Conditions: 150 mM KOAc, 10 mM MgCl2 and 150 mM bicine (pH 8.5), 24 C.
The record gives the reactivity of an RNA of 207 nucleotides to 2A3 and DMS.
The data come from the RNA Mapping Database (RMDB), library M2RFPK.
DMS (dimethyl sulfate) methylates the pairing face of unpaired adenines and cytosines.
RNA sequence: GGGAACGACUCGAGUAGAGUCGAAAAGCGAAAAUCGGACGGUGGCUGCUAGUCGCAUCGCAAAACCGCGGCAAGUGGAGUUAGCGAGAGGAGGCUGGGUUUUGGCUUCCUUAAGCAAUCGGUCACCAUAAGAGGAUUCGCUUCGGCGAAUCCUCAACAACAAGGGAUAGUUCGCUAUCCCUUGUUGAAAAGAAACAACAACAACAAC
Reactivity to 2A3 in 0.01 (KOAc 150mM, MgCl2 10mM, bicine 150mM(pH8.5), 24C), signal-to-noise 3, nucleotides 027 to 156: g030c020g040a050a050a010a130u200c110g070g080a060c050g030g000u010g010g000c020u040g000c020u010a030g040u040c030g000c020a030u040c020g000c060a050a070a030a040c040c040g000c010g010g040c090a100a080g030u060g090g040a040g030u050u070a020g010c000g000a030g010a000g040g000a010g000g000c010u060g020g160g100u120u110u180u300g040g000c000u010u000c000c000u000u000a020a010g000c000a000a020u030c010g000g000u000c000a000c010c000a010u050a080a040g000a000g000g000a000u000u010c010g000c000u010u020c080g070g000c000g000a000a000u000c000c000u000c000a000a000
Reactivity to DMS in 0.01 (KOAc 150mM, MgCl2 10mM, bicine 150mM(pH8.5), 24C), signal-to-noise 2, nucleotides 027 to 156: g010c040g000a080a030a040a150u020c010g030g020a070c030g030g000u000g050g110c030u000g020c040u000a180g010u000c020g030c010a140u010c030g000c050a070a090a070a180c110c070g000c010g020g050c010a050a080g020u000g000g030a070g000u000u000a160g000c010g000a300g010a030g010g020a050g030g040c000u000g070g040g000u000u000u020u010g010g000c010u000u000c020c020u010u010a010a300g000c000a080a050u000c040g000g000u010c000a020c000c000a210u010a090a130g040a020g030g000a040u000u000c020g020c000u000u000c220g060g030c000g000a010a000u000c020c000u000c000a000a050

Record summary: For 2A3 the reverse transcriptase was SuperScript II with manganese. For DMS, 2,739 sequencing reads were counted.